[RMDB]
RNA sequence: GGGAACGACUCGAGUAGAGUCGAAAACUGCCAGGUUCCUCAUCAAGGAGCUAUCAUAUCACAACCUAGAAUUGGAGAGAAACCGCCUGGAGGAGCUAGGCAUUAAACGCCAGUGUGUCUGGCCUUUCAUCGUCAUGAUGGAUGACUCAUGUGUCCACCACUCGUAAAUCUUCGGAUUUACGAGUGGAAAAGAAACAACAACAACAAC
Reactivity to 2A3 in 0.01 (KOAc 150mM, MgCl2 10mM, bicine 150mM(pH8.5), 24C), signal-to-noise 3, nucleotides 027 to 156: c050u070g030c000c010a040g020g000u010u000c020c000u020c020a100u060c020a080a080g030g020a030g050c060u060a060u110c020a050u090a050u170c080a080c060a240a150c040c040u120a100g140a280a120u090u110g010g010a070g020a010g010a100a120a020c020c020g040c020c040u010g010g000a000g000g000a010g010c020u070a060g000g000c010a000u070u160a070a140a000c040g010c010c000a000g000u030g050u050g070u210c000u000g000g030c000c000u020u020u010c000a030u000c000g300u140c090a160u300g030a000u010g000g010a010u030g040a040c030u090c110a090u190g060u040g050u130c010c090a020
The record gives the reactivity of an RNA of 207 nucleotides to 2A3. The RNA was probed in 150 mM KOAc, 10 mM MgCl2 and 150 mM bicine (pH 8.5) at 24 C. For 2A3 the reverse transcriptase was SuperScript II with manganese.